RNA sequence: GGGAACGACUCGAGUAGAGUCGAAAAGAUAUGGAUGUGACAGGGAGCUCUGAUUCGGAAACGAAUUUGAGCGAAGAACUGUACAUCCUAAGUCAAAACCUUCACAACCGUUCGCGGUUGUGAAGGACCGUUCUAAUAAGUUCGCUUAUUAGAACGGAAAAGAAACAACAACAACAAC
Reactivity to 2A3 in 0.01 (KOAc 150mM, MgCl2 10mM, bicine 150mM(pH8.5), 24C), signal-to-noise 4, nucleotides 027 to 126: g000a010u010a000u060g000g000a000u000g020u050g190a050c010a020g020g010g080a070g000c000u010c000u010g010a010u010u000c000g010g000a000a010a010c000g000a000a000u010u010u030g010a000g000c020g020a070a010g020a010a000c000u000g000u020a000c000a000u000c000c000u000a010a000g000u000c010a010a030a080a300c010c000u000u000c000a000c000a000a010c010c000g050u110u110c300g020c020g180g000u000u000g000u000g000a000a000g000g000a020
Reactivity to DMS in 0.01 (KOAc 150mM, MgCl2 10mM, bicine 150mM(pH8.5), 24C), signal-to-noise 5, nucleotides 027 to 126: g010a020u010a040u020g000g000a000u000g010u010g010a060c010a010g000g020g010a060g020c000u000c000u000g000a010u000u000c000g000g000a010a010a020c000g010a020a000u000u000u000g010a010g040c000g010a080a090g000a200a300c000u000g000u000a010c000a000u000c000c000u000a010a060g000u000c000a160a100a160a170c000c000u000u010c000a010c000a000a020c000c000g010u000u010c280g020c000g000g000u000u000g010u000g000a010a010g000g010a010
Background: This 177-nucleotide RNA was probed chemically with 2A3 and DMS. Values cover nucleotides 27 to 126. 2A3 adducts were read by reverse transcription with SuperScript II with manganese.